Structure probing data (2A3) for a 207-nucleotide construct.
For 2A3 the reverse transcriptase was SuperScript II with manganese.
The data come from the RNA Mapping Database (RMDB), library OK3TST.
Reactivities are given for positions 27 through 156.
Conditions: 150 mM KOAc, 10 mM MgCl2 and 150 mM bicine (pH 8.5), 24 C.

RNA sequence: GGGAACGACUCGAGUAGAGUCGAAAAUCAGACGGUUAUAUAUGGGGGAAGAAUUUAUAGCUGGACAAAUUCGACGCCAGGAAACAAUCAGCCUCCUAGUGCGGAUUGGCAGGAUGUGGGUGAGGCAAUUGCACAGGCUGGCGCUAUCGUUGGGCGCCCCCAAAGUAACCUUCGGGUUACUUUGGGGAAAAGAAACAACAACAACAAC
Reactivity to 2A3 in 0.01 (KOAc 150mM, MgCl2 10mM, bicine 150mM(pH8.5), 24C), signal-to-noise 2, nucleotides 027 to 156: u120c030a040g030a090c020g040g000u110u010a050u020a050u080a110u300g050g040g000g010g000a010a010g030a090a030u030u140u030a090u110a020g010c000u010g020g020a080c060a060a190a060u140u080c090g040a070c050g030c000c000a020g030g100a070a100a000c030a020a040u070c040a040g020c010c030u010c010c050u060a040g050u030g090c050g000g060a030u020u070g100g090c020a010g090g020a060u100g020u100g100g060g020u060g010a090g050g000c010a010a030u100u070g000c030a040c030a060g040g020c020u040g020g010c000g000c000u050a090u180c050g000u040u050g000g000g010c000g040c000